[RMDB]
RNA sequence: GGGAACGACUCGAGUAGAGUCGAAAAAACUAUUGGUGCAAGACUUACGCUUAAAUAAGCUCCUGCAUUGGUCUGAUCAAACCAUAUGCUACAAGGAUAGUGUGUUUUAUGUUGUAAAGAAUAGUACAAACCCUUGUCUUCGGACAAGGGAAAAGAAACAACAACAACAAC
Reactivity to DMS in 0.01 (KOAc 150mM, MgCl2 10mM, bicine 150mM(pH8.5), 24C), signal-to-noise 4, nucleotides 027 to 129: a000a060c070u000a000u000u000g000g030u020g030c040a060a090g060a000c070u080u020a040c090g010c040u020u040a040a050a060u020a100a000g040c080u000c000c080u040g030c030a050u000u000g040g010u030c020u060g020a190u160c230a040a060a020c000c010a040u070a000u020g030c040u030a180c160a020a000g010g030a130u000a050g030u040g010u050g050u010u000u000u000a060u080g010u120u010g000u000a040a090a140g020a090a070u020a160g030u000a080c120a040a060a140
Reactivity to 2A3 in 0.01 (KOAc 150mM, MgCl2 10mM, bicine 150mM(pH8.5), 24C), signal-to-noise 3, nucleotides 027 to 129: a000a010c070u220a070u090u120g040g000u030g070c000a050a050g010a080c010u000u040a010c140g030c020u000u050a090a000a000u100a100a060g030c050u000c000c000u010g040c020a060u000u050g000g000u000c040u000g100a100u160c100a020a040a010c000c000a050u030a040u220g000c000u000a120c040a040a110g000g000a040u150a240g060u080g040u000g000u020u150u000u000a040u080g090u220u050g010u050a030a020a120g080a150a040u080a000g060u000a020c050a020a020a040
This 170-nucleotide RNA was probed chemically with DMS and 2A3. For DMS, 10,581 sequencing reads were counted. 2A3 adducts were read by reverse transcription with SuperScript II with manganese. High DMS reactivity at an A or C suggests that its Watson-Crick edge is free. It was measured as part of the RMDB library 15KLIB. The RNA was probed in 150 mM KOAc, 10 mM MgCl2 and 150 mM bicine (pH 8.5) at 24 C. For 2A3, 2,231 sequencing reads were counted.